An RNA of 177 nucleotides, treated with DMS and 2A3 and read out base by base.

RNA sequence: GGGAACGACUCGAGUAGAGUCGAAAAGGGAGACCCAAUUGAGCGGACGUUUCGGCCUGCCAUGGCCUCAUCAGUGAGACGGCGUUUCAGUCAGUCUCAUACGUCUGAGCGUGAUACCCGCUCACUGCAUGACUGCUGUGUUCGCACAGCAGUCAUGAAAAGAAACAACAACAACAAC
Reactivity to DMS in 0.01 (KOAc 150mM, MgCl2 10mM, bicine 150mM(pH8.5), 24C), signal-to-noise 2, nucleotides 027 to 126: g030g020g010a110g010a140c030c000c060a070a150u000u000g010a050g040c010g000g000a050c080g040u000u020u020c150g010g040c020c010u000g020c160c130a110u020g020g000c030c000u010c100a050u000c080a040g030u000g000a020g000a080c000g010g010c110g030u000u000u000c110a000g040u000c040a020g030u000c000u010c010a010u020a040c200g030u010c130u010g010a020g030c020g000u020g000a060u000a090c140c000c000g000c100u010c000a010c140u010g000
Reactivity to 2A3 in 0.01 (KOAc 150mM, MgCl2 10mM, bicine 150mM(pH8.5), 24C), signal-to-noise 1, nucleotides 027 to 126: g070g040g010a110g050a080c000c000c030a010a030u040u080g020a000g000c080g000g100a000c150g030u000u140u110c030g000g040c010c000u000g190c100c040a090u140g000g000c000c030u000c010a070u010c000a020g070u000g040a000g050a030c010g000g020c070g000u000u120u250c020a000g000u020c000a040g080u020c040u000c000a040u180a080c080g080u000c070u020g000a000g060c030g080u050g020a010u100a090c000c000c000g030c010u010c010a020c030u040g000
It was measured as part of the RMDB library VIROID. For DMS, 1,182 sequencing reads were counted.